[RMDB]
RNA sequence: GGGAACGACUCGAGUAGAGUCGAAAAAGGAUCGAUCCUGAUCUCAGUCAGAGAGGAAGGAUCUCCUCUAGCUGACUAGAGCUUCAGAGUCGAAGUCCUUCAGAGCUGACUCUGACUCUUCUCCUAGAGUCUCGAUCCUUCAGAGCUAGGACUGAGAGUAGGUUCAGCUAUUCGUAGCUGAACCUACAAAAGAAACAACAACAACAAC
Reactivity to 2A3 in 0.01 (KOAc 150mM, MgCl2 10mM, bicine 150mM(pH8.5), 24C), signal-to-noise 2, nucleotides 027 to 156: a000g190g020a150u180c090g010a080u030c040c030u080g130a110u010c000u010c010a000g010u030c010a000g000a020g010a000g150g050a010a000g010g010a000u010c020u020c010c000u000c000u010a060g020c100u050g040a050c020u030a020g020a000g020c040u080u060c010a020g000a000g020u020c040g090a140a040g100u150c060c000u100u130c120a090g010a030g100c010u060g010a010c010u000c010u000g040a080c000u000c000u020u000c000u010c010c020u010a020g000a020g130u050c040u050c190g000a020u040c010c000u010u040c020a030g020a020g080c050u030a020g000g090a010c000u000g000a010g000a000